[RMDB]
RNA sequence: GGGAACGACUCGAGUAGAGUCGAAAAGAUAUGGAUAGCGCUGAACGAACUACACUUUCUCUCGGAAACGAGAGGAGUGCGAUACGAAUAAGCUAUCCUAAGUCAAAGUACUUGUUCGCAAGUACAACAUAGAGACCCUGUUCGCAGGGUCUCUAUGAAAAGAAACAACAACAACAAC
Reactivity to 2A3 in 0.01 (KOAc 150mM, MgCl2 10mM, bicine 150mM(pH8.5), 24C), signal-to-noise 3, nucleotides 027 to 126: g020a020u050a030u100g020g010a000u010a000g020c020g070c290u170g140a190a090c080g010a090a060c120u210a080c130a020c040u060u300u280c000u000c000u000c000g000g000a060a030a010c000g010a010g010a000g000g000a010g000u000g020c070g030a000u080a270c040g000a110a060u160a190a040g000c000u000a000u000c000c000u010a030a010g020u000c070a130a010a090g010u000a000c000u030u010g030u110u140c260g020c150a010a000g010u000a010c000a030a030
Reactivity to DMS in 0.01 (KOAc 150mM, MgCl2 10mM, bicine 150mM(pH8.5), 24C), signal-to-noise 3, nucleotides 027 to 126: g000a030u000a300u000g000g000a010u000a010g020c000g000c240u010g030a110a100c040g010a090a100c130u020a130c020a000c000u000u000u010c000u000c000u000c020g020g000a080a070a140c010g000a030g000a010g020g000a000g000u000g010c140g010a140u000a060c020g030a080a080u010a120a250g010c000u000a010u000c000c000u010a020a110g000u000c030a130a100a060g000u000a000c000u010u000g030u000u020c240g020c000a010a020g000u000a000c010a100a140